[RMDB]
RNA sequence: GGGAACGACUCGAGUAGAGUCGAAAAGAAAUGGUCUCAAAAGAACGGAUUGUUCGAGAAUUAUCCGAUUCUACUGUUGUAGGAAAGGAAAUAAACUACAGAAUAAAGUGGAUAGUACCAUAAGAAAGGGAAGAUAAUAGUUCGCUAUUAUCUUCCCAAAAGAAACAACAACAACAAC
Reactivity to DMS in 0.01 (KOAc 150mM, MgCl2 10mM, bicine 150mM(pH8.5), 24C), signal-to-noise 6, nucleotides 027 to 126: g020a080a070a050u010g000g000u000c020u010c110a090a090a110a100g000a060a040c040g010g020a110u040u030g020u000u000c030g000a100g010a090a080u000u010a110u000c000c000g000a300u000u000c010u000a010c020u030g010u040u040g020u000a000g000g010a010a050a300g010g010a010a060a050u010a040a070a120c040u000a060c060a120g010a090a090u020a030a090a110g000u000g010g000a080u010a050g000u040a030c000c010a020u010a060a120g000a060a050a120
Reactivity to 2A3 in 0.01 (KOAc 150mM, MgCl2 10mM, bicine 150mM(pH8.5), 24C), signal-to-noise 5, nucleotides 027 to 126: g130a010a230a040u090g000g020u030c030u020c080a070a120a040a090g050a070a020c020g010g200a160u090u150g000u040u040c040g040a030g050a080a100u030u050a050u130c000c010g040a070u000u000c030u010a030c010u090g170u300u160g010u020a000g040g060a070a050a030g140g000a050a050a040u160a020a040a010c020u110a060c050a030g120a090a110u120a130a070a040g080u030g040g020a020u060a100g030u060a090c000c010a010u000a040a060g130a120a030a020